[RMDB]
RNA sequence: GGGAACGACUCGAGUAGAGUCGAAAAAUCAGAGGGCGCUAUCAUGCAAACUAGGAUUGUCUGCUCAUGCACAGAACCAACUACCGAUUACUAACAGUGCAUGAAGGUUAGUUAUUCCAUAUUAAUUAAAACUCGUAAUUCUUCGGAAUUACGAGAAUCCGUAACUAAUCUUCGGAUUAGUUACGGAAAAAGAAACAACAACAACAAC
Reactivity to DMS in 0.01 (KOAc 150mM, MgCl2 10mM, bicine 150mM(pH8.5), 24C), signal-to-noise 2, nucleotides 027 to 156: a090u010c020a140g020a150g050g010g020c170g070c060u040a040u000c080a150u000g000c030a090a120a060c040u000a190g000g040a070u000u000g000u000c000u000g000c000u010c040a090u000g010c020a040c000a060g000a030a130c010c020a070a050c050u010a300c040c030g010a130u000u000a160c090u000a080a050c060a090g020u010g030c000a020u010g000a080a190g020g000u010u010a060g020u010u010a060u000u000c020c020a040u000a160u020u000a110a170u010u000a050a060a060a230c000u010c000g020u000a020a020u000u000c000u000u000c300g070g010a060a000u020u000a010c010g000a000g010a020a020
Reactivity to 2A3 in 0.01 (KOAc 150mM, MgCl2 10mM, bicine 150mM(pH8.5), 24C), signal-to-noise 2, nucleotides 027 to 156: a000u020c010a010g020a050g050g000g000c040g000c010u020a120u300c110a100u300g020c060a030a050a010c020u010a000g040g020a010u000u060g080u060c010u060g050c000u020c000a000u000g010c010a000c000a080g040a160a070c070c030a130a060c040u150a070c070c090g110a070u100u080a050c010u010a030a090c000a050g050u010g030c000a000u010g010a020a050g040g020u020u040a010g000u010u070a080u060u090c000c020a000u130a060u210u160a100a090u090u100a010a060a060a050c000u000c000g000u000a000a000u000u000c000u010u010c100g040g000a000a000u000u000a000c000g000a000g000a000a000

Conditions: 150 mM KOAc, 10 mM MgCl2 and 150 mM bicine (pH 8.5), 24 C. The record gives the reactivity of an RNA of 207 nucleotides to DMS and 2A3. DMS (dimethyl sulfate) methylates the pairing face of unpaired adenines and cytosines. Values cover nucleotides 27 to 156. 2A3 adducts were read by reverse transcription with SuperScript II with manganese. The 2A3 profile rests on 951 reads.